Conditions: 150 mM KOAc, 10 mM MgCl2 and 150 mM bicine (pH 8.5), 24 C. An RNA of 177 nucleotides, treated with DMS and 2A3 and read out base by base. DMS adducts were read by reverse transcription with MarathonRT. The 2A3 profile rests on 1,539 reads. Reactivities are given for positions 27 through 126.
RNA sequence: GGGAACGACUCGAGUAGAGUCGAAAAAUAGAAUGCAAUAUGUAGAUAUGUAUAGAAGUUGGACACAGUAGUUAGUGUGUUAAGCAUUUUAGUUUAGUAUAUUUUCUACAAGACUUUUUACAGUGUACUACUACUACGUCUUCGGACGUAGUAGUAGAAAAGAAACAACAACAACAAC
Reactivity to DMS in 0.01 (KOAc 150mM, MgCl2 10mM, bicine 150mM(pH8.5), 24C), signal-to-noise 2, nucleotides 027 to 126: a100u030a000g000a030a050u010g000c100a060a030u050a080u030g000u010a060g000a150u020a050u010g000u020a020u060a040g010a040a050g000u000u000g000g000a110c110a140c240a040g000u000a050g000u000u000a010g020u000g020u000g020u000u050a030a010g010c020a150u010u020u020u020a070g010u020u000u000a020g000u000a010u000a000u000u000u000u000c000u010a000c000a050a100g000a040c000u000u000u000u000u000a070c070a030g010u010g000u000a100
Reactivity to 2A3 in 0.01 (KOAc 150mM, MgCl2 10mM, bicine 150mM(pH8.5), 24C), signal-to-noise 3, nucleotides 027 to 126: a010u200a050g260a140a010u100g090c040a070a100u110a130u260g110u140a080g030a070u160a050u180g020u000a070u030a160g040a050a000g000u070u040g100g010a120c120a040c160a230g000u010a000g000u000u040a040g000u000g000u000g010u030u010a000a000g000c040a150u090u020u110u300a010g000u040u020u000a000g030u010a010u000a000u050u000u000u020c000u000a080c060a090a040g020a010c010u010u070u030u060u060a010c030a040g030u040g120u170a080